[RMDB]
RNA sequence: GGGAACGACUCGAGUAGAGUCGAAAAGGUAGCUAAAAAAAUCCGGUGUACAGAAAAAUUACCCAAAACGGAUAAUUUUUUUAUCUAACCAUGGAAAUGUUUGCAUCUAAAUCUCUUCAGGUGGAAGCAACGUAUUAAUAUUCGUAUUAAUACGUUGAAAAGAAACAACAACAACAAC
Reactivity to 2A3 in 0.01 (KOAc 150mM, MgCl2 10mM, bicine 150mM(pH8.5), 24C), signal-to-noise 1, nucleotides 027 to 126: g010g040u050a110g010c030u070a000a050a050a050a070a060a050u000c030c020g040g000u030g020u010a150c120a000g070a020a050a000a010a050u030u030a060c020c020c040a090a090a090a000c080g000g000a000u020a090a050u030u000u000u000u030u020u080a020u050c030u030a050a030c010c010a050u130g000g030a000a050a080u100g060u100u090u070g040c020a000u050c020u030a020a210a220u070c020u020c000u130u140c080a030g150g060u130g120g000a030a000g120
Reactivity to DMS in 0.01 (KOAc 150mM, MgCl2 10mM, bicine 150mM(pH8.5), 24C), signal-to-noise 2, nucleotides 027 to 126: g020g020u000a070g000c030u030a000a020a030a110a030a110a200u000c020c010g000g020u000g010u010a070c160a100g000a030a030a030a030a020u010u000a010c000c010c040a090a050a070a170c220g020g000a040u000a010a000u020u000u020u020u010u000u000a040u020c040u000a080a070c020c010a060u000g000g000a040a060a040u000g000u000u000u000g000c000a020u000c040u000a050a110a070u000c060u000c010u000u000c080a070g010g000u010g000g020a110a060g000

Chemical mapping of a 177-nucleotide RNA with 2A3 and DMS.
Reactivities are given for positions 27 through 126.
The DMS profile rests on 1,499 reads.